[RMDB]
RNA sequence: GGGAACGACUCGAGUAGAGUCGAAAACUACCAAGUGGCACAAUACCUGUAUGUAGAUAGUGAAGUAAUAUUGUUCUACAUACACCUAUUGAGCCACCUGGUGGAAAUCUGCCAGUUCGCUGGCAGACAUUUUGCUGAAGUUCGCUUCAGCAAAAUGAAAAGAAACAACAACAACAAC
Reactivity to DMS in 0.01 (KOAc 150mM, MgCl2 10mM, bicine 150mM(pH8.5), 24C), signal-to-noise 3, nucleotides 027 to 126: c020u000a000c010c000a000a020g020u010g010g030c000a170c020a020a000u000a000c060c200u000g000u000a000u000g000u000a020g000a000u010a040g010u000g030a110a170g010u010a060a120u000a070u000u000g000u000u000c000u000a010c000a020u000a000c000a000c030c210u000a000u000u000g010a070g020c010c010a000c010c010u010g000g010u000g020g010a060a050a170u000c000u000g000c010c010a010g000u000u010c250g020c030u000g000g000c000a000g000a030
Reactivity to 2A3 in 0.01 (KOAc 150mM, MgCl2 10mM, bicine 150mM(pH8.5), 24C), signal-to-noise 3, nucleotides 027 to 126: c000u010a010c000c000a030a000g000u010g010g010c000a010c010a060a010u010a020c000c040u020g000u010a000u010g010u010a000g010a040u030a030g130u120g170a200a040g130u190a080a190u090a100u190u140g060u070u010c000u000a000c000a000u010a000c000a000c010c000u000a000u000u010g010a020g000c000c000a000c000c000u000g000g000u000g010g000a030a160a000u010c000u000g010c000c010a010g010u040u070c160g070c080u010g000g030c000a000g000a000